[RMDB]
RNA sequence: GGGAACGACUCGAGUAGAGUCGAAAACUCACGUCUCUCAUAGAAUAGACGUGCAGGAGGUCGUAUGCGCUUUACUCUUUCCGUCCUGUCCCUGACCUCUGUCUUGCUGCUCAGUGGAUGCGGCCUGCUCACCUUGCAUUUUCGAAUGCAAGGUGAGAAAAGAAACAACAACAACAAC
Reactivity to DMS in 0.01 (KOAc 150mM, MgCl2 10mM, bicine 150mM(pH8.5), 24C), signal-to-noise 3, nucleotides 027 to 126: c020u000c010a020c020g010u010c000u000c120u010c070a220u010a130g000a110a050u010a000g000a010c000g030u000g030c190a050g020g010a090g000g020u000c040g000u000a050u000g030c030g010c010u010u000u010a070c060u000c040u010u010u010c050c050g010u000c020c030u010g010u000c020c000c000u010g000a100c090c040u010c060u010g000u000c070u000u000g010c040u000g020c060u010c060a060g020u010g010g010a080u000g030c020g000g000c010c040u000g010
Reactivity to 2A3 in 0.01 (KOAc 150mM, MgCl2 10mM, bicine 150mM(pH8.5), 24C), signal-to-noise 3, nucleotides 027 to 126: c010u000c010a020c000g020u000c010u000c000u010c040a210u070a270g150a300a020u050a040g000a160c000g000u020g030c010a070g000g140a030g000g030u060c040g010u050a050u150g100c030g000c000u100u080u060a090c010u030c000u060u050u020c050c020g030u000c000c010u030g040u010c030c000c010u020g030a050c030c020u110c010u030g050u030c040u040u050g000c000u010g000c010u010c060a070g040u080g130g040a020u050g030c000g020g030c020c010u050g000